An RNA of 207 nucleotides, treated with 2A3 and read out base by base. Conditions: 150 mM KOAc, 10 mM MgCl2 and 150 mM bicine (pH 8.5), 24 C.
RNA sequence: GGGAACGACUCGAGUAGAGUCGAAAAAAAGACUGGAGGAGAAGCAGGCUUUUAGGGUGAAUCAAGGGUUUAACUGGGGACAUAUGGAGUCUAAGAUGCAUGUUAGACAUUCAAGUAGAAUUAGCUACUAUGCAGUUUUAUUUAGGAAUCUGAAACACUAAUUUAGUGCCUUCGGGCACUAAAUUAGAAAAGAAACAACAACAACAAC
Reactivity to 2A3 in 0.01 (KOAc 150mM, MgCl2 10mM, bicine 150mM(pH8.5), 24C), signal-to-noise 1, nucleotides 027 to 156: a000a000a000g030a010c000u000g040g030a010g000g020a060g010a030a050g080c040a010g090g010c020u050u060u030u120a080g070g000g000u060g070a040a070u050c100a100a070g000g000g040u090u180u070a050a030c050u050g020g010g030g010a000c000a040u100a040u100g020g020a000g000u020c020u010a010a030g040a030u100g040c000a000u010g020u130u050a040g000a000c010a040u060u050c010a020a120g030u070a060g130a110a150u130u110a040g020c000u000a020c020u030a110u090g010c000a000g010u170u000u030u040a130u050u100u090a010g040g050a040a110u040c040u010g040a140a060a010c030a000